[RMDB]
RNA sequence: GGGAACGACUCGAGUAGAGUCGAAAACGUGUCUCGUUCGCGAGACACGAAAGGGAAAUGGACUGAGCGGGGCCGACCGCCAAACAACCGGCAAAAUAAAUAAAACCAUAAACUUCGGUUUAUGGAAUCUAUCCAUAUGGUUCGCCAUAUGGAUAGAAAAAGAAACAACAACAACAAC
Reactivity to DMS in 0.01 (KOAc 150mM, MgCl2 10mM, bicine 150mM(pH8.5), 24C), signal-to-noise 4, nucleotides 027 to 126: c010g030u010g000u000c000u020c000g020u000u020c230g020c000g030a010g000a010c010a010c010g010a010a040a100g010g000g010a070a060a100u000g000g010a100c110u010g000a150g020c030g000g000g000g010c010c020g030a090c010c010g000c020c110a060a060a090c080a040a040c300c000g010g020c020a120a060a080a100u020a060a060a140u000a040a080a160a180c010c000a000u000a010a000a000c010u000u000c230g000g000u000u000u000a000u000g000g000a040a090
Reactivity to 2A3 in 0.01 (KOAc 150mM, MgCl2 10mM, bicine 150mM(pH8.5), 24C), signal-to-noise 3, nucleotides 027 to 126: c000g000u020g000u000c000u010c000g050u050u000c100g040c010g100a010g020a000c010a010c010g000a030a010a000g080g000g020a060a080a090u110g030g060a030c080u110g020a070g110c010g010g020g010g010c030c010g150a300c010c000g000c020c000a090a050a020c020a010a020c030c010g000g000c000a110a060a000a080u090a020a060a020u110a010a040a030a080c000c000a010u010a000a010a000c000u030u100c230g070g000u000u000u000a000u000g000g000a000a030

Chemical mapping of a 177-nucleotide RNA with DMS and 2A3. Conditions: 150 mM KOAc, 10 mM MgCl2 and 150 mM bicine (pH 8.5), 24 C.